The data come from the RNA Mapping Database (RMDB), library OK3TST. The record gives the reactivity of an RNA of 207 nucleotides to 2A3 and DMS. Conditions: 150 mM KOAc, 10 mM MgCl2 and 150 mM bicine (pH 8.5), 24 C. DMS adducts were read by reverse transcription with MarathonRT. The 2A3 profile rests on 1,614 reads. Values cover nucleotides 27 to 156. Values are in units of 0.01, from 0 to 300, in steps of 10.
[RMDB]
RNA sequence: GGGAACGACUCGAGUAGAGUCGAAAAGGAUGGAAGAUAGCUCUAGUGAGGUAACUGUAAACCGUGAGGUUACUACAGAUAACCCAUACACGAUCUCAGUAACCAACAAAACACUUUCGGCAAUCCGUAUCAAAAUGUUUAUGCCUCGCGGCGUACGGUGGACCAUUUAAUUCGUUAAAUGGUCCACAAAAGAAACAACAACAACAAC
Reactivity to 2A3 in 0.01 (KOAc 150mM, MgCl2 10mM, bicine 150mM(pH8.5), 24C), signal-to-noise 3, nucleotides 027 to 156: g060g020a020u080g010g020a050a040g060a110u100a070g000c020u000c020u080a060g000u030g050a080g040g020u030a050a030c000u010g060u110a040a040a010c030c010g020u020g000a040g000g000u030u020a030c010u020a010c040a010g050a090u030a030a030c000c040c010a040u130a050c050a010c030g070a040u020c060u010c080a010g020u040a080a080c010c020a040a080c040a060a140a040a000c030a010c040u010u070u100c030g000g000c010a000a030u000c030c010g060u070a020u140c060a100a030a020a060u120g050u070u130u040a050u090g020c000c010u050c070g040c100g010g000c030g010u050a050c040g020
Reactivity to DMS in 0.01 (KOAc 150mM, MgCl2 10mM, bicine 150mM(pH8.5), 24C), signal-to-noise 1, nucleotides 027 to 156: g050g020a180u000g000g060a140a080g020a020u000a070g000c070u000c050u000a140g020u010g020a070g050g020u010a080a140c030u000g020u010a030a060a020c010c000g020u000g020a160g100g000u000u010a050c080u000a090c100a040g020a110u000a080a100c010c010c010a110u000a300c060a070c070g020a060u000c020u000c020a030g050u000a080a120c000c020a050a080c190a050a100a140a040c050a050c080u000u000u000c020g000g010c040a120a140u010c080c050g000u020a050u000c040a040a070a080a070u020g020u000u000u020a080u050g000c040c030u020c070g020c210g020g060c000g030u000a050c040g000